RNA sequence: GGGAACGACUCGAGUAGAGUCGAAAAGAUAUGGAUCAAUUCGCUCGAUGAAAGAGGAACUAUUUAUGUCGGAAACGACAUAAACGAAUUCCUCUGGAGAGUUCGUUGAUCCUAAGUCAAACAUAUGUAGCCCAAGUUCGCUUGGGCUACAUAUGAAGCUUCCAGUCUACUUCGGUAGACUGGAAGCAAAAGAAACAACAACAACAAC
Reactivity to 2A3 in 0.01 (KOAc 150mM, MgCl2 10mM, bicine 150mM(pH8.5), 24C), signal-to-noise 2, nucleotides 027 to 156: g010a000u000a010u060g000g000a000u000c000a000a030u110u060c030g030c020u030c020g300a300u010g020a000a000a020g010a010g000g030a000a020c120u000a000u030u000u000a000u000g000u000c000g010g020a000a010a010c000g000a000c000a000u010a000a000a000c000g000a280a300u010u020c020c000u010c000u000g000g010a010g000a000g020u080u060c000g000u010u000g000a000u010c010c000u000a010a010g000u000c000a070a020a040c010a010u000a000u040g000u000a000g000c000c000c010a000a000g030u080u150c290g000c190u000u000g000g000g000c000u000a000c000a000u000a000u000g000a000a000